[RMDB]
RNA sequence: GGGAACGACUCGAGUAGAGUCGAAAAAGAGCUUUUGUGAUGUUAAUGGGGAGUGUGUGACAGCACUUACACUUUUUCAGGUGACCCGGUCCAACGGACCCCGGUUGAGUUCACAACCGGUUUGCGAAGCGGCUAAUUCAUUCGUGAAUUAGCCGCUAAAAGAAACAACAACAACAAC
Reactivity to DMS in 0.01 (KOAc 150mM, MgCl2 10mM, bicine 150mM(pH8.5), 24C), signal-to-noise 2, nucleotides 027 to 126: a080g010a120g000c030u010u000u000u000g010u000g010a070u010g020u000u010a070a070u010g020g010g020g030a300g020u000g000u000g010u000g010a160c150a300g000c000a000c010u000u030a000c000a030c000u000u000u000u010u000c280a110g000g010u000g020a040c000c010c000g020g010u000c000c020a150a150c210g010g000a020c010c010c010c010g000g000u000u000g000a010g000u000u010c010a010c000a020a000c010c000g010g010u010u000u000g020c050g020a180
An RNA of 177 nucleotides, treated with DMS and read out base by base. Conditions: 150 mM KOAc, 10 mM MgCl2 and 150 mM bicine (pH 8.5), 24 C. For DMS the reverse transcriptase was MarathonRT. It was measured as part of the RMDB library OK2TRN.